Background:
Source: RMDB library OK2TRN, as collected in RNAgym. The record gives the reactivity of an RNA of 177 nucleotides to DMS and 2A3. The reactions ran in a buffer of 150 mM KOAc, 10 mM MgCl2 and 150 mM bicine (pH 8.5), at 24 C.

RNA sequence: GGGAACGACUCGAGUAGAGUCGAAAAUUCUAUGGCUCAUCAUGUCUGAAUGGCUGAGAUAGUCAAUGUGUGUCACAGGGACUGGAGGCCUACCCUGCUUGGACAAUAUAAGGGCCACUAACACCUGUCCUCAGUGUGCAUUCGUGCACACUGAGGAAAAAGAAACAACAACAACAAC
Reactivity to DMS in 0.01 (KOAc 150mM, MgCl2 10mM, bicine 150mM(pH8.5), 24C), signal-to-noise 1, nucleotides 027 to 126: u010u000c170u020a280u000g010g000c020u000c040a080u000c300a030u000g000u000c020u000g000a080a070u000g010g040c000u020g000a230g060a190u000a030g000u000c000a030a020u010g030u000g040u030g000u030c020a040c010a050g000g000g010a060c070u010g000g050a300g020g000c010c000u000a120c070c050c030u020g030c210u020u000g000g000a020c010a050a040u010a150u000a070a110g000g020g010c000c020a070c270u000a080a070c180a080c100c050u000g000
Reactivity to 2A3 in 0.01 (KOAc 150mM, MgCl2 10mM, bicine 150mM(pH8.5), 24C), signal-to-noise 1, nucleotides 027 to 126: u030u040c070u090a110u110g010g000c070u010c040a050u010c030a050u080g010u000c010u050g130a190a150u100g000g000c050u080g000a010g010a080u270a040g030u000c010a000a040u050g050u000g020u030g220u250c030a010c000a010g000g010g020a010c000u040g000g020a010g000g040c000c010u030a080c000c010c000u060g050c090u060u020g040g010a010c060a140a050u060a000u010a180a230g000g000g040c000c000a000c040u080a080a020c000a010c000c040u050g070